[RMDB]
RNA sequence: GGGAACGACUCGAGUAGAGUCGAAAAGUCGACGAAGGCAUGUGAGCCAACUCGAUGAAGAGCGUCAGCGGACGGCCUCCGAGACGAGCGAUGGACAGUAGAGCUUCUGCUCCUACCAGUCGCGUGCGAGUGCUGAAGUGUUCGCACUUCAGCACUCAAAAGAAACAACAACAACAAC
Reactivity to 2A3 in 0.01 (KOAc 150mM, MgCl2 10mM, bicine 150mM(pH8.5), 24C), signal-to-noise 1, nucleotides 027 to 126: g000u030c010g000a080c000g060a230a100g010g000c040a050u120g090u040g300a090g000c010c010a030a010c000u000c000g060a070u110g040a100a060g080a010g000c000g000u020c050a030g140c010g030g000a060c110g010g010c000c000u000c000c000g000a050g000a020c020g000a010g000c010g010a030u070g000g000a000c010a020g010u030a020g000a020g000c000u240u100c040u210g020c040u040c040c000u030a000c000c020a020g020u020c000g030c010g010u030g060c040
Reactivity to DMS in 0.01 (KOAc 150mM, MgCl2 10mM, bicine 150mM(pH8.5), 24C), signal-to-noise 2, nucleotides 027 to 126: g020u010c000g000a110c150g010a230a070g020g030c010a090u000g050u000g000a100g040c000c010a020a300c300u000c010g000a050u000g000a110a110g010a040g000c030g060u010c110a140g000c030g020g000a070c140g010g000c160c000u020c010c050g010a260g010a080c040g000a120g010c010g010a020u000g010g000a030c010a010g000u030a010g000a050g000c050u020u020c300u050g000c030u000c170c050u000a010c010c010a010g070u000c010g020c000g000u000g000c130
Source information:
An RNA of 177 nucleotides, treated with 2A3 and DMS and read out base by base. The 2A3 profile rests on 1,111 reads. DMS adducts were read by reverse transcription with MarathonRT. The reactions ran in a buffer of 150 mM KOAc, 10 mM MgCl2 and 150 mM bicine (pH 8.5), at 24 C.